RNA sequence: GGGAACGACUCGAGUAGAGUCGAAAAGCGCUCGUGAUACGGCGAGAAGCUGAGGUGCGUGAGCUGGAGCGCCGACUGGUGUAAUCCUACGCUCUUACGCGCCUGCACUACGGCGUGACGAUGUCAUAAGUCGGUGCAUCGCACGUAUCUGCUCCGGAUUAAGACGUUCCUUCGGGAACGUCUUAAUAAAAGAAACAACAACAACAAC
Reactivity to 2A3 in 0.01 (KOAc 150mM, MgCl2 10mM, bicine 150mM(pH8.5), 24C), signal-to-noise 1, nucleotides 027 to 156: g010c020g020c000u030c080g230u090g000a020u040a200c050g000g000c020g000a030g090a040a030g080c080u120g020a010g050g000u000g040c010g010u060g000a000g000c070u000g010g040a020g080c000g040c000c020g180a210c140u220g000g050u020g000u060a110a070u000c000c000u060a050c230g000c000u080c000u050u130a010c000g020c000g020c050c000u000g000c000a050c070u130a100c070g030g000c000g040u020g020a010c030g150a070u300g020u030c000a020u050a090a120g130u110c020g020g000u010g000c000a010u020c000g010c000a240c050g010u030a010u000c000u080g030c000u090c000c000g040g000

Conditions: 150 mM KOAc, 10 mM MgCl2 and 150 mM bicine (pH 8.5), 24 C.
The record gives the reactivity of an RNA of 207 nucleotides to 2A3.
Source: RMDB library OK3TST, as collected in RNAgym.